[RMDB]
Chemical mapping of a 177-nucleotide RNA with DMS and 2A3. Source: RMDB library OK2TRN, as collected in RNAgym. The 2A3 profile rests on 9,088 reads. 2A3 adducts were read by reverse transcription with SuperScript II with manganese. For DMS the reverse transcriptase was MarathonRT. The DMS profile rests on 5,302 reads. Conditions: 150 mM KOAc, 10 mM MgCl2 and 150 mM bicine (pH 8.5), 24 C.

RNA sequence: GGGAACGACUCGAGUAGAGUCGAAAACAUAGUCCAGAGGCAUUUGCAAUUGUUUAAUUGAGGCUUGUUCCUAUUAGACACUGGUGAGAAUCUUGGUACGGGAUCAAGUUUCAUUCUGACCAAAGUCCUUGUACAUCUUGUUCGCAAGAUGUACAAGAAAAGAAACAACAACAACAAC
Reactivity to DMS in 0.01 (KOAc 150mM, MgCl2 10mM, bicine 150mM(pH8.5), 24C), signal-to-noise 5, nucleotides 027 to 126: c080a080u000a060g010u000c050c020a050g010a100g010g000c050a060u010u000u010g020c100a070a080u010u000g010u000u000u000a070a080u000u010g010a090g010g000c040u000u000g010u000u000c000c010u000a170u010u000a090g020a070c070a100c150u010g000g020u000g010a130g010a100a080u010c030u000u000g000g020u010a130c160g000g010g000a040u000c030a020a040g010u000u000u000c100a060u010u000c050u000g010a100c060c050a030a130a130g010u000c080
Reactivity to 2A3 in 0.01 (KOAc 150mM, MgCl2 10mM, bicine 150mM(pH8.5), 24C), signal-to-noise 5, nucleotides 027 to 126: c010a040u150a030g040u030c040c030a020g030a050g090g000c040a060u070u070u240g030c060a120a120u080u050g070u080u200u140a120a130u040u060g010a020g000g020c020u010u030g010u030u020c010c000u030a110u080u210a040g030a020c050a010c130u040g030g000u030g040a050g030a070a040u050c020u030u040g050g030u100a100c110g070g020g050a010u010c010a010a010g000u010u010u050c000a010u040u000c020u020g050a020c020c000a050a050a040g050u020c010